The record gives the reactivity of an RNA of 177 nucleotides to 2A3. The reactions ran in a buffer of 150 mM KOAc, 10 mM MgCl2 and 150 mM bicine (pH 8.5), at 24 C. For 2A3 the reverse transcriptase was SuperScript II with manganese. 2A3 is a SHAPE reagent: it acylates the 2'-hydroxyl of flexible nucleotides of all four kinds.

RNA sequence: GGGAACGACUCGAGUAGAGUCGAAAAUAAAACCAUCGAGCUCUAAUGAGUUCGAUGGAGCAUGAAUGUCUCCUGAGUAUCACAUCAUGCAAAUCAGGAGGUGUCGAGGAAAACUCGACGCCAAAAACCCUCGCGUAUCAUUCGUGAUACGCGAGGGAAAAGAAACAACAACAACAAC
Reactivity to 2A3 in 0.01 (KOAc 150mM, MgCl2 10mM, bicine 150mM(pH8.5), 24C), signal-to-noise 2, nucleotides 027 to 126: u100a000a030a000a050c000c000a000u000c000g000a000g000c000u000c050u190a300a240u300g030a000g000u000u000c000g030a020u000g000g000a000g000c020a000u000g080a290a030u090g010u030c010u040c110c030u060g120a120g170u200a070u180c140a050c020a000u020c000a000u020g040c000a010a100a080u130c090a140g150g040a050g020g000u000g020u000c000g000a000g040g100a100a090a090a090c000u000c000g010a000c000g000c030c000a000a120a120a000a000